Source: RMDB library 15KREP, as collected in RNAgym. Chemical mapping of a 177-nucleotide RNA with 2A3 and DMS. Reactivities are given for positions 27 through 126. In probing experiments dimethyl sulfate is read out at A N1 and C N3, which are open when not base-paired.

[RMDB]
RNA sequence: GGGAACGACUCGAGUAGAGUCGAAAAGGUGGCUAGGACGCAGGGGACCAGUGGAGCCGUGGGAUGCUCUUCCCAAUCUGACCUGACCCCUCCCCCAGCGGGUCGCCCAGGAAUGGCGGGACCCCACGACUAUAACUCGGUUCGCCGAGUUAUAGUCAAAAGAAACAACAACAACAAC
Reactivity to 2A3 in 0.01 (KOAc 150mM, MgCl2 10mM, bicine 150mM(pH8.5), 24C), signal-to-noise 1, nucleotides 027 to 126: g030g000u070g010g010c030u030a040g080g000a080c050g050c070a020g000g020g000g010a050c030c030a030g000u050g090g090a000g000c030c020g050u110g030g070g000a070u080g050c000u060c000u060u020c000c000c000a030a070u050c030u030g030a070c000c040u000g080a100c010c040c000c010u020c010c000c000c000c000a020g070c080g020g000g000u010c010g080c080c000c000a010g000g120a120a020u040g030g020c030g040g020g030a010c030c000c010c000a040c020
Reactivity to DMS in 0.01 (KOAc 150mM, MgCl2 10mM, bicine 150mM(pH8.5), 24C), signal-to-noise 1, nucleotides 027 to 126: g010g010u010g030g000c050u000a070g030g010a110c060g010c080a100g010g000g000g000a200c200c100a030g020u000g010g010a060g050c080c050g070u000g020g000g000a140u010g000c080u010c060u000u000c000c000c000a110a250u000c070u010g000a060c020c010u010g000a240c030c000c000c010u000c040c000c000c020c010a160g050c140g000g010g000u000c000g010c010c010c010a040g010g030a160a110u010g010g040c140g000g010g010a030c030c000c000c090a040c190